The record gives the reactivity of an RNA of 207 nucleotides to 2A3 and DMS. Reactivities are given for positions 27 through 156.
[RMDB]
RNA sequence: GGGAACGACUCGAGUAGAGUCGAAAAAAACGCGUCAACAUCAAUACCAUGGUAUUUAUCAGCAAUUACCAUAUAACUCACUAUAUCGUGCCGCGACGCGUGCUUCGUAGUUUGGCGCACAGCAUGUGGUUCGAAACUUAAGAAUUGCGCACGUGUGCCCAAAGUAAGUUUUCGAACUUACUUUGGGAAAAGAAACAACAACAACAAC
Reactivity to 2A3 in 0.01 (KOAc 150mM, MgCl2 10mM, bicine 150mM(pH8.5), 24C), signal-to-noise 9, nucleotides 027 to 156: a000a000a000c050g000c010g020u030c020a060a080c010a130u120c050a060a140u100a200c060c050a030u040g010g010u010a040u020u070u050a210u140c100a040g090c060a070a060u080u030a040c000c020a020u070a020u030a140a090c030u090c100a030c060u090a040u050a050u300c030g020u020g080c120c050g040c050g020a020c020g000c000g000u000g010c010u040u100c040g070u020a060g070u040u070u110g050g000c030g030c010a020c010a050g090c020a050u100g020u020g060g050u070u050c040g100a070a080a080c040u110u080a090a050g050a110a060u090u090g010c020g020c010a000c020g010u040g030u070g070
Reactivity to DMS in 0.01 (KOAc 150mM, MgCl2 10mM, bicine 150mM(pH8.5), 24C), signal-to-noise 4, nucleotides 027 to 156: a070a030a030c030g040c010g020u000c030a130a070c080a090u010c090a070a080u000a070c110c070a070u000g030g030u000a040u000u000u000a130u010c120a190g010c140a060a070u000u000a020c010c000a050u000a210u000a080a070c070u000c080a080c080u000a100u010a030u010c070g020u000g020c000c030g010c040g010a040c010g030c020g020u000g000c080u000u010c080g020u010a050g000u000u000u000g000g000c040g010c010a160c060a070g000c040a300u000g020u010g020g000u010u000c040g000a080a050a060c110u000u000a060a130g030a040a110u000u000g030c030g030c050a050c050g040u000g020u010g000